[RMDB]
This 177-nucleotide RNA was probed chemically with DMS and 2A3. For 2A3 the reverse transcriptase was SuperScript II with manganese. DMS adducts were read by reverse transcription with MarathonRT. The DMS profile rests on 1,814 reads.

RNA sequence: GGGAACGACUCGAGUAGAGUCGAAAAAGGCAUGAGCUGGGCAUGCUGAUAUGAAAACUCAACCAGUAGAUUUUUGGGGCUAAGGAGGGAAGGUCUGAAAUGUACUUCUGCACCUCCCCCAUAGUUAACUCUUCCUGUCAUUCGUGACAGGAAGAGUAAAAGAAACAACAACAACAAC
Reactivity to DMS in 0.01 (KOAc 150mM, MgCl2 10mM, bicine 150mM(pH8.5), 24C), signal-to-noise 2, nucleotides 027 to 126: a150g000g000c000a010u010g000a130g030c000u000g010g010g000c030a000u000g010c000u000g020a160u020a070u000g010a090a070a100a140c070u000c070a120a070c020c020a020g020u010a120g010a130u000u000u000u000u010g020g000g010g020c060u020a020a060g020g020a120g010g000g010a030a040g000g000u000c020u000g010a010a030a140u000g010u000a150c180u010u000c010u000g000c140a070c010c010u000c040c000c000c000c000a030u000a040g010u000u020a110
Reactivity to 2A3 in 0.01 (KOAc 150mM, MgCl2 10mM, bicine 150mM(pH8.5), 24C), signal-to-noise 2, nucleotides 027 to 126: a000g040g000c010a000u000g010a030g040c000u000g010g030g110c030a000u020g010c020u010g020a040u050a090u200g200a070a030a070a050c050u060c030a040a070c010c010a000g040u050a030g040a150u150u180u070u130u130g100g010g000g000c010u060a050a050g040g030a090g080g040g000a070a040g000g020u000c000u020g040a030a030a060u230g010u090a130c070u000u030c000u030g040c070a010c020c000u000c020c000c010c000c000a000u010a030g050u040u070a050